Structure probing data (2A3 and DMS) for a 207-nucleotide construct.

RNA sequence: GGGAACGACUCGAGUAGAGUCGAAAAUAGGGAGUCCUUUCCAGACUGGAUAAAGGUGGUACAUAUACACCAUGGGAUACUAUGCAGUCAUAAAAAAGAAUGAGACCAUGACCUUCGCAGGAACAUGGGUGGAGCUGGAGUUAUUAGCCUUAGCAAAGUAAUUAAAUGGAUUCGUCCAUUUAAUUACAAAAGAAACAACAACAACAAC
Reactivity to 2A3 in 0.01 (KOAc 150mM, MgCl2 10mM, bicine 150mM(pH8.5), 24C), signal-to-noise 6, nucleotides 027 to 156: u160a020g020g000g010a040g040u050c010c000u030u040u000c020c000a030g030a060c040u060g030g050a050u080a090a160a070g040g000u020g010g030u090a080c060a060u200a030u030a100c030a000c020c010a030u050g030g010g020a020u030a120c040u030a030u080g070c020a010g020u020c030a050u180a030a120a010a010a000a000g110a050a060u090g020a030g020a070c020c000a010u030g020a040c020c000u060u060c110g000c080a020g010g020a080a050c000a020u030g000g020g000u020g030g010a020g000c010u010g030g010a050g020u060u070a080u090u110a040g010c010c030u070u090a020g040c050a080a080a030
Reactivity to DMS in 0.01 (KOAc 150mM, MgCl2 10mM, bicine 150mM(pH8.5), 24C), signal-to-noise 4, nucleotides 027 to 156: u000a110g040g000g020a110g010u000c010c030u010u010u000c040c020a220g000a140c030u000g000g030a090u000a040a130a110g020g040u000g020g040u020a170c130a110u000a140u000a100c020a040c010c010a080u020g010g020g010a190u010a060c080u000a040u000g010c020a070g020u000c030a130u050a000a040a080a070a050a060g010a060a080u000g000a130g010a090c030c040a060u000g010a270c010c020u000u000c210g000c170a070g030g030a020a100c020a060u000g010g010g040u000g010g010a130g020c020u000g010g010a150g010u000u000a080u000u010a110g020c030c030u000u010a070g020c060a090a050a170